Chemical mapping of a 177-nucleotide RNA with 2A3. Values cover nucleotides 27 to 126.
[RMDB]
RNA sequence: GGGAACGACUCGAGUAGAGUCGAAAAGCUGUCGCAGUCCAUGGCGGCAAGGUGCCGGGGUCGACAUAGCGCGUGUCGAGAAGUUGGCGUGUCGUGCUGCUCUGGGUGUAGACACGCAUCGCGUUCGGCUACUCGGCAGUUUCGACUGCCGAGUAGCAAAAGAAACAACAACAACAAC
Reactivity to 2A3 in 0.01 (KOAc 150mM, MgCl2 10mM, bicine 150mM(pH8.5), 24C), signal-to-noise 2, nucleotides 027 to 126: g030c000u010g020u000c010g030c040a030g070u000c060c000a010u080g070g000c010g000g000c020a020a040g140g060u130g060c050c050g040g000g090g210u000c010g000a000c100a120u170a070g100c090g040c000g090u000g040u000c000g020a000g000a160a120g110u150u170g000g050c050g030u080g100u030c140g000u070g040c020u000g000c000u000c080u090g020g020g000u000g010u040a030g000a000c000a000c070g000c020a000u060c030g060c060g030u180u000c010g020